[RMDB]
RNA sequence: GGGAACGACUCGAGUAGAGUCGAAAAUGUGUAAGUCCUGCUCGGGGCGGAAGCAUUAAAACCAUUCGAGCUAGUCAAUGCGUGGCGUGUCUCUCCGCAGCGUGUUGGCGAAUGUAAAGAGUGACUAUUGACCACGCAACGUUCGCGUUGCGUGGAACUAUUCCUUUAACUUCGGUUAAAGGAAUAGAAAAGAAACAACAACAACAAC
Reactivity to DMS in 0.01 (KOAc 150mM, MgCl2 10mM, bicine 150mM(pH8.5), 24C), signal-to-noise 2, nucleotides 027 to 156: u010g040u000g020u000a160a100g000u000c010c010u010g030c130u010c090g040g020g020g020c000g000g010a130a300g000c020a050u000u000a040a080a110a230c030c010a180u010u000c010g000a090g030c010u000a160g000u000c020a010a040u010g000c020g010u000g020g050c030g010u010g000u000c060u000c020u000c060c010g000c000a140g020c000g020u000g010u000u020g000g060c010g000a080a030u020g020u000a070a060a110g000a040g010u000g010a100c050u000a100u000u000g020a210c000c000a010c010g020c000a030a010c000g030u000u000c280g020c060g020u010u000g000c000g010u000g000g000a020a050
Reactivity to 2A3 in 0.01 (KOAc 150mM, MgCl2 10mM, bicine 150mM(pH8.5), 24C), signal-to-noise 5, nucleotides 027 to 156: u050g050u000g050u090a060a050g000u020c010c030u020g000c010u000c000g000g010g010g010c020g030g010a040a000g000c010a010u060u120a050a080a040a070c060c030a040u100u170c020g000a000g010c000u020a010g000u010c010a000a010u020g010c010g020u020g180g000c000g000u010g010u000c000u000c000u010c000c000g000c020a030g010c010g000u020g000u010u000g000g000c000g000a000a000u060g050u110a000a020a020g010a000g010u010g010a000c010u060a140u070u250g070a070c000c000a010c000g000c000a010a000c000g030u060u070c210g010c010g080u010u000g000c000g000u000g000g000a000a000
Source: RMDB library M2RFPK, as collected in RNAgym. The record gives the reactivity of an RNA of 207 nucleotides to DMS and 2A3. In probing experiments dimethyl sulfate is read out at A N1 and C N3, which are open when not base-paired. The reactions ran in a buffer of 150 mM KOAc, 10 mM MgCl2 and 150 mM bicine (pH 8.5), at 24 C. For 2A3 the reverse transcriptase was SuperScript II with manganese.